Chemical mapping of a 177-nucleotide RNA with 2A3. Source: RMDB library RFM100, as collected in RNAgym. For 2A3 the reverse transcriptase was SuperScript II with manganese. Conditions: 150 mM KOAc, 10 mM MgCl2 and 150 mM bicine (pH 8.5), 24 C.

[RMDB]
RNA sequence: GGGAACGACUCGAGUAGAGUCGAAAAUUUGAACUGAAAUUUGUUUGUUCUGAGGAUUAUUUUUCAAGAUAUCAAAACGAAGAUAAGUGGCUGCACAAACUUUUUUUAGCGAAUAUAUCGUUAUGUUCAUCGCUGUAAUGUUCGCAUUACAGCGAUGAAAAGAAACAACAACAACAAC
Reactivity to 2A3 in 0.01 (KOAc 150mM, MgCl2 10mM, bicine 150mM(pH8.5), 24C), signal-to-noise 1, nucleotides 027 to 126: u040u030u150g030a040a000c060u020g010a000a000a090u090u020u010g020u000u000u110g050u100u000c000u000g010a010g230g060a010u010u000a050u020u200u000u060u000c000a040a070g020a130u060a080u190c100a000a010a020a020c110g040a000a040g050a000u000a040a000g000u070g230g000c000u000g000c000a000c020a020a010a000c000u190u000u020u000u030u080u000a000g000c000g010a100a040u100a070u010a130u220c050g150u120u110a160u120g040u000u050